The record gives the reactivity of an RNA of 177 nucleotides to 2A3 and DMS.
For 2A3, 67,278 sequencing reads were counted.
It was measured as part of the RMDB library OK1LIB.
For DMS the reverse transcriptase was MarathonRT.
RNA sequence: GGGAACGACUCGAGUAGAGUCGAAAAACACUCGUGGGGGUCCCUACCCAGCGAGUCGAACUGCGAGUAGCGACGUUACUGCGGAAUGCGUAUUGGUGGUGUCUAGAACCGGUGCCACUGUCGCCUAUCAUGUCAUGCGGUUCGCUGCAUGGCAUGAAAAAGAAACAACAACAACAAC
Reactivity to 2A3 in 0.01 (KOAc 150mM, MgCl2 10mM, bicine 150mM(pH8.5), 24C), signal-to-noise 9, nucleotides 027 to 126: a000c050a010c010u020c010g020u040g010g080g000g010g050u080c020c010c010u060a070c000c000c000a030g060c010g010a010g010u020c020g050a080a050c030u060g020c050g050a030g040u070a020g030c030g050a050c060g070u090u090a040c030u090g030c020g030g130a150a070u200g030c020g010u120a070u100u200g050g000u010g010g010u020g030u020c030u050a100g070a240a080c080c060g010g010u020g010c000c000a020c030u040g020u020c010g000c000c000u070a090
Reactivity to DMS in 0.01 (KOAc 150mM, MgCl2 10mM, bicine 150mM(pH8.5), 24C), signal-to-noise 9, nucleotides 027 to 126: a080c160a050c030u000c010g020u000g010g010g000g000g000u010c020c020c020u030a130c010c000c010a170g020c020g000a020g010u000c080g000a120a130c040u000g010c050g000a090g000u010a090g010c010g000a050c050g010u020u010a040c040u010g020c010g000g010a110a060u030g010c010g010u010a060u030u030g000g030u000g000g010u000g000u000c020u010a110g020a100a100c220c120g000g000u010g010c020c020a020c020u010g000u000c020g000c020c110u010a110